[RMDB]
RNA sequence: GGGAACGACUCGAGUAGAGUCGAAAAGGGCUGAGCACUUUUGAUGCGCAGUUUAUACGAACCGGUAAGUAUAUACUGCUUGGAUACGAACCGGUAAGUAUCCUUCGGCAUCUUGUGCUCUGCCCAAGGGAAGUGGAUCCUUCGGGAUCUGCUUCCCAAAAGAAACAACAACAACAAC
Reactivity to 2A3 in 0.01 (KOAc 150mM, MgCl2 10mM, bicine 150mM(pH8.5), 24C), signal-to-noise 9, nucleotides 027 to 126: g000g000g000c020u030g000a000g010c000a000c010u060u100u130u270g000a000u000g000c050g000c010a010g000u030u100u080a010u000a000c010g010a110a070c000c000g010g010u040a040a000g020u000a020u010a020u030a090c060u080g220c090u140u250g090g020a000u000a010c000g010a100a060c010c000g000g000u010a000a000g000u000a000u020c000c020u040u070c030g110g010c000a000u000c000u010u020g000u000g000c000u000c000u000g000c000c000c000a000a000
Reactivity to DMS in 0.01 (KOAc 150mM, MgCl2 10mM, bicine 150mM(pH8.5), 24C), signal-to-noise 5, nucleotides 027 to 126: g010g000g010c010u000g010a010g010c000a000c000u000u000u020u020g000a010u000g020c000g030c070a060g000u020u010u010a010u000a010c000g000a290a120c000c000g010g000u010a040a300g010u000a000u000a030u030a150c090u010g000c130u020u010g000g010a010u000a010c010g000a200a100c010c010g000g010u010a010a240g000u000a000u000c300c020u000u030c050g010g000c010a000u000c000u000u010g000u000g000c000u000c000u000g000c000c000c010a010a030